An RNA of 207 nucleotides, treated with 2A3 and DMS and read out base by base. The reactions ran in a buffer of 150 mM KOAc, 10 mM MgCl2 and 150 mM bicine (pH 8.5), at 24 C.
RNA sequence: GGGAACGACUCGAGUAGAGUCGAAAAUCCCAAAGGUUGCCGAAUCCGAAAGGUCUGGAGGAACCGCUUUUUGGGGUUAAUCUGCAGUGAAGCUGCAGUAGGGAUACCUUCUGUCCCGCACCCGACAGCUAACUCCAUAGGCAAUAAAGGAAGGAGACACGUCGUACGUAUUCGUACGUACGACGUGAAAAGAAACAACAACAACAAC
Reactivity to 2A3 in 0.01 (KOAc 150mM, MgCl2 10mM, bicine 150mM(pH8.5), 24C), signal-to-noise 1, nucleotides 027 to 156: u010c020c000c050a010a080a000g070g010u000u020g000c010c000g080a100a050u010c030c010g030a060a090a000g030g040u020c050u030g000g020a010g020g050a090a120c010c050g020c000u190u090u010u060u300g060g000g000g040u020u020a080a050u150c000u040g000c000a000g010u070g300a110a040g060c000u000g000c000a000g000u000a030g010g000g000a010u120a160c000c000u060u020c020u010g010u000c000c030c020g020c030a040c020c000c020g060a080c070a040g030c000u040a070a040c000u000c000c020a000u050a040g000g050c000a000a010u110a090a040a000g090g000a010a000g020g020a040g000a020
Reactivity to DMS in 0.01 (KOAc 150mM, MgCl2 10mM, bicine 150mM(pH8.5), 24C), signal-to-noise 1, nucleotides 027 to 156: u000c000c000c000a150a140a020g010g020u010u000g000c010c040g040a120a250u010c040c010g000a120a110a180g040g010u020c110u010g010g000a150g000g000a200a160c150c010g000c120u020u000u000u020u030g040g040g020g010u000u000a080a120u000c030u000g000c040a040g020u000g020a300a180g040c010u000g010c010a020g010u000a050g000g020g010a120u000a050c060c130u010u000c040u000g010u000c280c040c000g020c070a150c000c020c010g040a050c090a070g060c030u000a110a190c000u000c000c010a050u000a080g050g000c000a070a090u000a040a060a190g000g040a020a120g040g010a300g000a280
For DMS the reverse transcriptase was MarathonRT.